RNA sequence: GGGAACGACUCGAGUAGAGUCGAAAACGCACUCGCAGCUUAAUAACCUGCGCUGAGCCCUUCUCCCCCAGCGUGCCUGUGUCCUAGGGAAUUGGAAGGUCAUCCUUCACAGGAUCGUGUGGAAGUCAUUACUCGUGAGUGUUCGCACUCACGAGAAGUAGAUGAACAGGUUCGCCUGUUCAUCUACAAAAGAAACAACAACAACAAC
Reactivity to DMS in 0.01 (KOAc 150mM, MgCl2 10mM, bicine 150mM(pH8.5), 24C), signal-to-noise 2, nucleotides 027 to 156: c090g000c050a140c030u000c020g040c020a060g010c030u000u010a130a150u010a130a140c250c000u010g000c000g020c080u010g020a040g020c000c020c080u000u000c090u000c040c000c010c000c010a050g000c020g030u000g010c000c000u000g020u010g050u000c110c030u010a100g000g020g000a080a160u000u000g020g020a090a090g040g020u000c070a090u010c040c010u000u000c010a020c010a050g000g010a050u020c050g000u000g040u000g020g000a130a280g000u000c040a160u010u000a120c000u000c000g040u010g000a040g040u000g020u000u000c300g000c000a020c000u000c000a010c000g030a010g000a000a140
Reactivity to 2A3 in 0.01 (KOAc 150mM, MgCl2 10mM, bicine 150mM(pH8.5), 24C), signal-to-noise 4, nucleotides 027 to 156: c060g000c000a030c020u010c010g000c010a000g010c000u030u030a060a000u030a030a030c000c000u030g030c020g060c210u050g030a060g010c020c000c000u210u100c100u040c020c010c000c000c000a020g000c020g060u150g030c000c000u000g000u010g010u110c070c100u050a030g000g010g100a070a050u120u070g070g060a070a080g040g000u100c010a080u030c020c000u030u020c000a010c010a010g000g020a030u090c010g020u090g040u050g120g040a090a070g070u090c070a100u090u140a110c010u000c000g010u000g000a000g000u020g000u050u000c090g010c080a000c000u000c000a000c000g010a000g000a000a000
Chemical mapping of a 207-nucleotide RNA with DMS and 2A3. 2A3 adducts were read by reverse transcription with SuperScript II with manganese. Values cover nucleotides 27 to 156. Values are in units of 0.01, from 0 to 300, in steps of 10. The RNA was probed in 150 mM KOAc, 10 mM MgCl2 and 150 mM bicine (pH 8.5) at 24 C. The 2A3 profile rests on 2,773 reads.